[RMDB]
RNA sequence: GGGAACGACUCGAGUAGAGUCGAAAACUUAAUAUGACUUGAGGGGCUAGCCGGUGCAUCAAGUCGGUGUUUUUAUUCUUUGGUGCCAAUUUAUCGAGUUUAUCGAGAUCGAGAUUAUGACCGGUUGCCCAUCAUGCCCAUUCGUGGGCAUGAUGGGAAAAGAAACAACAACAACAAC
Reactivity to DMS in 0.01 (KOAc 150mM, MgCl2 10mM, bicine 150mM(pH8.5), 24C), signal-to-noise 1, nucleotides 027 to 126: c030u070u040a080a090u030a100u000g000a040c080u010u000g000a060g000g010g010g000c020u000a090g000c000c000g010g010u020g020c000a010u030c130a020a020g010u000c010g000g030u000g000u000u030u020u000u010a040u000u000c040u000u000u020g010g030u000g010c130c100a100a070u080u070u040a060u040c000g010a040g050u000u070u000a010u010c030g010a020g000a060u000c010g000a030g000a130u020u000a050u000g010a150c010c000g000g000u010u000g000
Reactivity to 2A3 in 0.01 (KOAc 150mM, MgCl2 10mM, bicine 150mM(pH8.5), 24C), signal-to-noise 2, nucleotides 027 to 126: c000u040u070a100a010u280a060u250g020a030c010u030u050g000a040g060g170g120g000c020u000a010g070c000c080g000g010u000g000c020a000u040c010a010a010g040u010c010g070g000u080g040u000u060u000u000u110a150u130u040c080u010u140u190g020g040u070g100c110c050a060a120u040u180u050a090u060c000g010a000g050u140u140u130a130u130c060g070a020g010a050u030c060g050a010g020a160u020u120a090u130g050a000c000c030g000g000u030u020g030